[RMDB]
RNA sequence: GGGAACGACUCGAGUAGAGUCGAAAAGGGUGAAGUUAUUCCGCUCAUCACUAAUCAUAAUAUUCUAAAACCUCUUAUUGGUCAGAAAUUUUGUAUUGUAUAUACUAACUCUCUAAUGGACGAGAACACGUAUGCUAUGGAGUUGCUUACUGGGUACGUUAUAUCAGUUUUUCGAAACUGAUAUAACAAAAGAAACAACAACAACAAC
Reactivity to 2A3 in 0.01 (KOAc 150mM, MgCl2 10mM, bicine 150mM(pH8.5), 24C), signal-to-noise 3, nucleotides 027 to 156: g090g000g010u030g050a070a020g020u080u090a130u160u020c020c030g000c040u020c010a060u010c010a030c140u120a100a060u070c080a030u050a200a040u110a260u160u080c080u090a140a140a140a140c010c000u060c050u230u180a110u220u150g030g000u000c020a010g080a070a140a080u050u160u060u060g010u050a110u080u080g000u050a060u010a010u020a290c020u020a080a050c010u010c010u000c030u050a140a100u130g080g000a030c020g010a020g010a050a010c030a000c060g040u050a040u070g010c030u040a030u090g010g010a030g010u040u060g030c000u040u010a080c050u050g020g000g060u080a030c070
Reactivity to DMS in 0.01 (KOAc 150mM, MgCl2 10mM, bicine 150mM(pH8.5), 24C), signal-to-noise 2, nucleotides 027 to 156: g020g030g050u000g010a100a080g020u000u010a130u010u000c050c020g000c010u010c040a110u000c050a130c070u000a130a080u000c020a050u000a090a080u010a120u000u000c020u010a070a160a150a140c040c000u000c110u000u000a110u000u000g010g020u020c020a110g010a060a090a140u010u010u010u000g020u000a110u000u010g000u000a130u020a150u010a090c050u020a070a130c030u000c030u030c050u010a040a120u000g010g000a050c050g020a200g020a050a060c060a020c070g000u020a040u000g020c050u000a070u000g000g020a140g000u010u020g000c010u000u000a060c060u000g060g020g000u010a060c130